[RMDB]
RNA sequence: GGGAACGACUCGAGUAGAGUCGAAAAGAUAUGGAUCGUCAUACAGAGAUCCCAUCGGAAACGAUGGAAGAUCGACGAAGUAUACGAUCCUAAGUCAAAUCUGACUAGGCUUCGGCCUAGUCAGAAACCUAUUCAUGUAGUUCGCUACAUGAAUAGGAAAAGAAACAACAACAACAAC
Reactivity to 2A3 in 0.01 (KOAc 150mM, MgCl2 10mM, bicine 150mM(pH8.5), 24C), signal-to-noise 7, nucleotides 027 to 126: g010a000u010a000u050g000g000a000u000c010g040u040c120a020u060a200c020a020g160a010g000a090u000c020c010c000a010u000c000g010g010a020a010a010c010g000a000u010g020g030a200a140g010a020u020c010g260a300c090g090a140a010g000u000a040u000a060c000g000a000u000c000c000u000a000a000g000u000c030a090a000a250u030c000u000g000a000c000u010a000g000g020c010u050u190c300g060g000c000c010u000a000g000u000c000a000g000a000a000a000
Reactivity to DMS in 0.01 (KOAc 150mM, MgCl2 10mM, bicine 150mM(pH8.5), 24C), signal-to-noise 6, nucleotides 027 to 126: g010a010u000a070u010g000g010a000u000c000g020u000c300a030u000a010c000a080g010a060g000a030u000c000c000c000a000u000c000g010g000a010a020a030c000g010a010u000g010g010a120a120g010a020u000c010g010a190c250g000a140a150g000u000a020u000a010c000g000a010u000c000c000u000a000a080g000u000c020a110a120a160u000c000u000g000a020c000u000a010g000g010c000u000u010c290g030g010c000c000u000a000g000u000c000a000g000a010a070a120
This 177-nucleotide RNA was probed chemically with 2A3 and DMS.
For 2A3 the reverse transcriptase was SuperScript II with manganese.
The reactions ran in a buffer of 150 mM KOAc, 10 mM MgCl2 and 150 mM bicine (pH 8.5), at 24 C.
DMS adducts were read by reverse transcription with MarathonRT.